[RMDB]
RNA sequence: GGGAACGACUCGAGUAGAGUCGAAAAGAGUUACGAAAUAAUGUUACUCGUACACGCACGGAAAAGUGACGUGCGUCGGAAGCUCAAGACGACGCAUGGAAAAGGCUUCUUACUGGAAUUUAAGAAAGGGUAUAUGAUUCUUCGGAAUCAUAUACCCAAAAGAAACAACAACAACAAC
Reactivity to 2A3 in 0.01 (KOAc 150mM, MgCl2 10mM, bicine 150mM(pH8.5), 24C), signal-to-noise 3, nucleotides 027 to 126: g010a010g010u060u050a000c010g150a030a180a300u270a090a100u260g010u000u040a010c000u000c010g000u030a020c020a020c110g000c000a030c010g050g060a060a060a020a050g050u080g030a010c010g010u000g000c000g000u000c030g010g040a080a060g020c050u090c180a060a010g170a040c020g020a000c000g010c010a020u040g030g010a080a060a000a000g050g020c060u010u060c000u000u050a010c010u070g130g050a150a180u130u090u080a180a120g030a030a020a030
Reactivity to DMS in 0.01 (KOAc 150mM, MgCl2 10mM, bicine 150mM(pH8.5), 24C), signal-to-noise 3, nucleotides 027 to 126: g000a000g000u010u020a040c000g020a040a160a160u040a100a150u020g000u000u020a040c020u010c010g020u010a090c180a110c070g000c040a070c020g030g000a050a070a080a110g020u020g050a160c040g020u000g010c000g000u000c000g000g000a100a080g000c050u010c130a070a070g000a200c010g010a000c010g000c000a030u010g020g010a030a030a110a080g000g000c050u000u000c020u010u000a110c050u000g000g000a050a110u030u010u020a060a050g020a040a110a130